[RMDB]
RNA sequence: GGGAACGACUCGAGUAGAGUCGAAAACUUCAAAUCAAUCGAGUGGCAUGUCAAGGUCAUAUCAAUAUUUUAGAAUCUGCGACUAUGAGAGAGGAAAUAAAUGAAAUUGCGCGACGUAUCAUCGUUGGUGGGGAUCGUUGUUCGCAACGAUCCCCACAAAAGAAACAACAACAACAAC
Reactivity to 2A3 in 0.01 (KOAc 150mM, MgCl2 10mM, bicine 150mM(pH8.5), 24C), signal-to-noise 1, nucleotides 027 to 126: c000u080u000c000a000a000a020u000c000a000a220u160c030g260a150g080u080g040g040c000a080u080g100u300c000a020a020g060g000u070c000a000u040a000u030c000a080a080u100a300u010u200u080u100a060g060a060a220u120c000u140g000c080g000a080c000u000a140u270g000a000g000a000g000a000g000g090a080a300a000u160a000a120a000u140g080a000a000a040u240u140g000c060g050c020g000a000c000g000u000a060u080c080a000u000c000g000u000u000g010
The record gives the reactivity of an RNA of 177 nucleotides to 2A3. It was measured as part of the RMDB library OK1LIB. Values cover nucleotides 27 to 126.